RNA sequence: GGGAACGACUCGAGUAGAGUCGAAAAGGUGGCAGGCGUAAAAAAACGGUGGAGCGGCUGCAAAAGAGCCGCCCCACCGGGUAAAAUCAGAAAUGAAAGAAGCGGACCCCGCGCAGGUGGCUAACCGCAUUUUGUAAGACUUCGGUCUUACAAAAUGAAAAGAAACAACAACAACAAC
Reactivity to DMS in 0.01 (KOAc 150mM, MgCl2 10mM, bicine 150mM(pH8.5), 24C), signal-to-noise 3, nucleotides 027 to 126: g000g030u010g000g020c030a060g010g000c030g010u020a000a000a110a090a070a050a080c020g000g030u000g020g010a040g000c020g000g030c020u020g010c120a070a060a200a270g000a070g000c000c010g050c000c010c000c010a000c020c010g020g000g000u030a040a050a120a060u000c050a040g010a110a070a040u020g000a070a070a080g000a140a140g010c020g000g000a120c020c050c010c070g020c100g030c060a050g000g030u000g010g030c040u010a060a080c020c010g010
Reactivity to 2A3 in 0.01 (KOAc 150mM, MgCl2 10mM, bicine 150mM(pH8.5), 24C), signal-to-noise 1, nucleotides 027 to 126: g060g000u010g010g010c020a010g000g000c000g050u120a100a180a100a030a000a020a030c000g000g000u000g000g000a000g000c020g030g000c000u020g010c020a100a100a060a060g050a040g000c010c000g030c020c000c000c000a000c030c000g050g000g000u060a060a040a000a040u120c070a020g040a120a080a010u080g040a130a050a070g070a020a020g040c010g000g040a100c010c000c010c020g000c020g000c020a040g060g070u050g040g030c020u030a030a010c010c000g020
The record gives the reactivity of an RNA of 177 nucleotides to DMS and 2A3. DMS adducts were read by reverse transcription with MarathonRT. The reactions ran in a buffer of 150 mM KOAc, 10 mM MgCl2 and 150 mM bicine (pH 8.5), at 24 C.